Description:
An RNA of 177 nucleotides, treated with 2A3 and DMS and read out base by base. It was measured as part of the RMDB library TTRDES. The RNA was probed in 150 mM KOAc, 10 mM MgCl2 and 150 mM bicine (pH 8.5) at 24 C.
RNA sequence: GGGAACGACUCGAGUAGAGUCGAAAAGAUAUGGAAUCCCAGGACAUGCUCUUAGGUCGGAAACGACCUUGGAGCAACAGCCUGGAUUCCUAAGUCAAACUAACUCACCCUUCGGGGUGAGUUAGAACUGAGAUUAGAUGUUCGCAUCUAAUCUCAGAAAAGAAACAACAACAACAAC
Reactivity to 2A3 in 0.01 (KOAc 150mM, MgCl2 10mM, bicine 150mM(pH8.5), 24C), signal-to-noise 2, nucleotides 027 to 126: g000a010u010a020u060g010g020a000a000u090c110c030c000a000g020g000a010c210a280u300g000c000u000c000u000u010a010g000g010u010c000g000g000a020a010a000c000g000a020c000c000u010u000g000g000a000g000c020a000a010c020a010g000c000c000u000g010g010a000u000u000c010c000u000a000a010g000u030c010a100a110a110c010u010a010a000c000u000c000a000c000c030c030u000u080c300g030g010g000g000u000g010a010g000u000u010a000g000a010a020
Reactivity to DMS in 0.01 (KOAc 150mM, MgCl2 10mM, bicine 150mM(pH8.5), 24C), signal-to-noise 3, nucleotides 027 to 126: g020a020u010a020u010g000g000a020a010u010c300c060c040a020g000g010a010c010a300u000g030c000u010c000u000u000a000g010g000u010c000g030g010a020a010a020c010g010a010c010c010u000u000g000g000a020g020c010a040a010c120a150g000c000c000u000g000g000a010u000u000c000c000u010a000a090g010u000c000a170a130a300c000u000a000a000c000u000c000a000c000c000c000u000u020c260g030g000g000g000u000g000a020g000u000u000a000g000a110a230